[RMDB]
RNA sequence: GGGAACGACUCGAGUAGAGUCGAAAACUCAAUGUAGGGAAUAACAUUGAAUUGAUACAAGUACCUUUUUCGGUGUAGGGAAAAACACCGAAUUGAUACAAAUACCUUUCUCAAUGUAGGGAAUAACAAAACAGGCAUCGCUUCGGCGAUGCCUGAACCUAUGAAAAAACUUCGGUUUUUUCAUAGGAAAAGAAACAACAACAACAAC
Reactivity to 2A3 in 0.01 (KOAc 150mM, MgCl2 10mM, bicine 150mM(pH8.5), 24C), signal-to-noise 1, nucleotides 027 to 156: c030u000c020a040a030u050g010u060a100g030g100g100a150a130u070a160a000c010a000u020u010g030a080a090u040u120g050a060u070a250c050a080a080g070u090a060c020c000u040u030u000u000u000c010g000g000u000g030u000a040g000g010g030a090a150a060a030a000c010a010c000c000g000a000a000u000u020g000a000u010a030c020a000a050a050u090a050c010c000u000u020u050c080u020c060a080a100u040g040u090a070g020g010g080a020a140u130a120a040c080a050a120a040a010c000a000g000g010c040a000u000c000g010c030u110u030c120g060g000c000g000a010u000g050c000c000u000g000a000a000
The record gives the reactivity of an RNA of 207 nucleotides to 2A3. Conditions: 150 mM KOAc, 10 mM MgCl2 and 150 mM bicine (pH 8.5), 24 C. For 2A3, 849 sequencing reads were counted.